[RMDB]
Chemical mapping of a 177-nucleotide RNA with DMS and 2A3. The 2A3 profile rests on 1,351 reads. The data come from the RNA Mapping Database (RMDB), library OK1LIB. 2A3 adducts were read by reverse transcription with SuperScript II with manganese. For DMS the reverse transcriptase was MarathonRT.

RNA sequence: GGGAACGACUCGAGUAGAGUCGAAAAUUUUACGAGAGCGGAUCUUGCGAUAGGCCCUACUGUCACUUCAAACAUGCUCGAAGAGAAGAUGCAGCAGGACUACCUGCUGUGGCUGGAUCAACGUCGGCCGUUAGCUGUUGUUCGCAACAGCUAACGGAAAAGAAACAACAACAACAAC
Reactivity to DMS in 0.01 (KOAc 150mM, MgCl2 10mM, bicine 150mM(pH8.5), 24C), signal-to-noise 2, nucleotides 027 to 126: u000u050u030u030a060c020g000a170g000a010g000c040g020g000a070u000c020u000u000g020c120g020a120u020a080g010g040c010c000c020u000a070c000u000g000u000c020a020c040u000u030c180a020a090a100c150a040u000g000c010u000c020g000a020a040g000a120g000a020a080g000a150u030g060c000a010g000c020a020g000g000a300c300u060a080c010c000u010g000c080u010g000u010g000g000c050u010g000g040a120u040c080a000a200c110g010u000c100g130g000
Reactivity to 2A3 in 0.01 (KOAc 150mM, MgCl2 10mM, bicine 150mM(pH8.5), 24C), signal-to-noise 3, nucleotides 027 to 126: u010u010u010u070a020c030g010a000g010a010g060c000g000g050a050u010c030u030u050g010c050g080a070u040a070g050g060c050c000c040u130a110c020u040g000u000c070a000c060u000u010c030a070a250a160c040a070u250g110c110u040c090g030a060a000g000a000g000a020a060g020a080u110g020c000a000g000c000a000g060g000a160c060u290a300c080c000u000g010c020u050g040u060g000g000c000u010g010g010a040u080c030a090a010c030g090u040c000g090g010